[RMDB]
RNA sequence: GGGAACGACUCGAGUAGAGUCGAAAACUACAAUGAGAUAAUCACCUCACACCUGUUAGAAUGGCUACUAUCAAAAAGACAAGAGGUAACAAGUAUUGGCCAGAAUAUGAAGAAAAAGGAGCCCCUGUGCAUUGUUGGUGGGAGUGUACACUGGUAAAAAUAUACGGAGUUUCGACUCCGUAUAUUUAAAAGAAACAACAACAACAAC
Reactivity to DMS in 0.01 (KOAc 150mM, MgCl2 10mM, bicine 150mM(pH8.5), 24C), signal-to-noise 2, nucleotides 027 to 156: c030u010a060c050a070a110u020g000a090g010a090u000a070a130u000c060a130c080c010u010c020a060c110a090c010c010u010g000u010u010a110g010a060a080u010g000g040c030u010a060c080u000a060u000c060a060a110a090a070a100g010a110c030a080a110g020a060g030g010u000a050a040c060a130a130g000u010a080u000u000g000g050c010c060a080g010a130a090u010a060u030g010a080a200g000a040a070a050a100a120g030g010a240g010c040c000c030c000u000g000u020g020c030a080u000u000g000u010u000g010g030u000g010g000g010a090g000u010g010u000a060c040a030c040u000g000g010u000a010a080
Reactivity to 2A3 in 0.01 (KOAc 150mM, MgCl2 10mM, bicine 150mM(pH8.5), 24C), signal-to-noise 1, nucleotides 027 to 156: c060u150a030c050a030a170u120g010a040g020a120u100a110a130u080c010a030c020c000u010c000a060c020a040c030c030u030g010u130u090a050g030a210a060u050g030g000c030u050a010c050u030a120u190c030a130a100a020a000a050g040a090c030a060a030g010a030g010g060u010a050a050c030a120a000g000u020a020u120u120g020g000c010c010a010g020a030a020u030a070u200g040a030a110g020a050a190a030a010a030g000g010a030g020c000c010c040c010u040g030u010g010c050a060u030u100g060u070u050g060g000u020g020g000g040a070g020u020g000u090a020c060a010c020u020g010g000u110a180a220